[RMDB]
RNA sequence: GGGAACGACUCGAGUAGAGUCGAAAACUCGCGUCAGCUGCGGCGGGCGGCGUGGCGUCGCUCCUCACUAACACCAUCGCUGCCGCCUCGGCGACAGGGCCGCCGCCAAGGCGCAACUACUCCGUGCAGCCGCGCAUAUAUUCGUAUAUGCGCGGCUAAAAGAAACAACAACAACAAC
Reactivity to 2A3 in 0.01 (KOAc 150mM, MgCl2 10mM, bicine 150mM(pH8.5), 24C), signal-to-noise 1, nucleotides 027 to 126: c000u040c050g010c020g040u020c030a040g000c000u030g000c020g010g000c000g060g050g060c000g000g020c010g020u000g010g000c020g040u050c010g000c000u010c070c000u050c000a100c020u080a250a040c000a020c090c000a090u300c060g020c000u000g020c020c000g090c000c000u000c000g100g000c010g000a050c010a000g070g060g000c000c020g020c040c030g020c000c060a030a080g040g000c030g000c000a010a010c000u100a020c020u090c010c010g000u000g040c000